[RMDB]
RNA sequence: GGGAACGACUCGAGUAGAGUCGAAAAGAUAUGGACCCAAGGGAGCUACUAUUCGUUGAAAUCGGAAACGAUGGAGAAUAGGUAGCUCGCUUGGGUCCUAAGUCAAAGGGAACGUUCGCGUUCCCAAGUAAUCUAACUGCUUCGGCAGUUAGAUUACAAAAGAAACAACAACAACAAC
Reactivity to 2A3 in 0.01 (KOAc 150mM, MgCl2 10mM, bicine 150mM(pH8.5), 24C), signal-to-noise 1, nucleotides 027 to 126: g020a020u060a040u190g000g000a000c020c000c020a000a000g180g060g000a000g030c000u000a000c000u000a030u020u010c010g210u300u050g020a050a040a020u000c000g010g010a130a030a010c020g000a000u010g030g010a030g010a030a010u030a060g100g000u020a000g000c000u010c000g000c000u000u010g010g020g000u000c020c000u000a000a000g020u010c000a020a010a030g000g000g000a010a000c010g020u070u080c250g000c000g160u000u000c020c000c000a000a000
Reactivity to DMS in 0.01 (KOAc 150mM, MgCl2 10mM, bicine 150mM(pH8.5), 24C), signal-to-noise 3, nucleotides 027 to 126: g000a020u000a300u010g010g000a000c010c000c000a010a010g010g000g010a000g010c000u000a020c000u010a010u000u010c000g010u000u010g000a090a140a020u000c000g010g000a170a080a190c010g010a020u000g000g000a080g010a010a010u000a020g020g020u000a000g000c000u010c000g020c010u000u000g000g000g000u000c000c000u010a000a080g010u000c050a080a120a130g000g010g010a020a010c020g010u000u010c210g010c020g010u000u000c010c000c010a000a050

Notes
An RNA of 177 nucleotides, treated with 2A3 and DMS and read out base by base. It was measured as part of the RMDB library TTRDEL.